[RMDB]
RNA sequence: GGGAACGACUCGAGUAGAGUCGAAAAUUAUGAUCCAAAACCAAGCAUGGUGGUGAUUUAUUCACCAAGAGAUUCCUAAGUACCUGUGUGAUGGACAUGGUAGAAUCUUUGUCCUGAGGGAGCUAUCCGUUUUAUUCGGUUUCGACCGAAUAAAACGAAAAGAAACAACAACAACAAC
Reactivity to DMS in 0.01 (KOAc 150mM, MgCl2 10mM, bicine 150mM(pH8.5), 24C), signal-to-noise 2, nucleotides 027 to 126: u010u000a100u010g000a100u010c040c030a050a100a160a120c040c040a050a160g020c130a050u010g000g040u010g020g010u000g000a000u000u020u020a120u040u000c000a020c030c000a090a080g000a120g010a060u000u010c000c090u000a080a130g010u000a070c020c060u010g020u000g010u020g010a230u000g010g010a070c040a020u010g010g010u000a090g000a040a070u000c010u000u020u020g010u010c000c000u010g010a110g000g000g010a090g000c100u000a030u000c080
Reactivity to 2A3 in 0.01 (KOAc 150mM, MgCl2 10mM, bicine 150mM(pH8.5), 24C), signal-to-noise 1, nucleotides 027 to 126: u220u090a110u100g050a060u070c010c000a040a000a000a060c030c020a050a020g120c070a130u090g040g030u030g000g010u020g010a030u000u080u140a170u170u000c020a000c020c000a010a000g080a010g000a090u080u010c020c010u050a110a000g060u040a090c030c040u070g010u030g030u020g100a060u050g000g000a020c010a000u000g050g000u070a190g070a220a120u030c000u040u020u020g040u010c000c000u000g010a030g040g000g010a010g000c000u050a040u070c020

Chemical mapping of a 177-nucleotide RNA with DMS and 2A3. 2A3 adducts were read by reverse transcription with SuperScript II with manganese. Source: RMDB library OK2TST, as collected in RNAgym. For DMS the reverse transcriptase was MarathonRT. Conditions: 150 mM KOAc, 10 mM MgCl2 and 150 mM bicine (pH 8.5), 24 C.